This 207-nucleotide RNA was probed chemically with 2A3. The 2A3 profile rests on 2,564 reads. The RNA was probed in 150 mM KOAc, 10 mM MgCl2 and 150 mM bicine (pH 8.5) at 24 C. For 2A3 the reverse transcriptase was SuperScript II with manganese.
RNA sequence: GGGAACGACUCGAGUAGAGUCGAAAAGCGUACUACCUUCUCUAGCGUGAGCGAGGAUCUACAUAACGCUCAUCCCAAAUAGGAUGAGCGGGAUGUAGGGAGCUUCGGGAGGUAUCGCAAACGGUCGUGUAUUCUGUUCGCAGAAUACACGACCGAAUCAGAUUCGUAUCUUCGGAUACGAAUCUGAAAAAGAAACAACAACAACAAC
Reactivity to 2A3 in 0.01 (KOAc 150mM, MgCl2 10mM, bicine 150mM(pH8.5), 24C), signal-to-noise 3, nucleotides 027 to 156: g000c000g040u070a070c040u020a010c010c010u040u050c140u060c120u160a090g080c050g230u300g110a010g010c020g020a260g040g000a010u000c000u010a000c000a000u010a030a010c010g000c000u000c000a000u000c010c010c000a210a300a090u300a080g000g000a000u000g000a000g000c000g000g000g000a000u010g000u000a000g000g000g000a000g000c000u060u030c020g000g000g000a000g010g040u020a050u300c000g000c000a050a030a020c010g010g000u000c000g000u000g000u000a000u000u000c000u000g070u080u070c250g000c070a000g000a020a000u000a010c000a000c000g000a000c010c000g000a000a010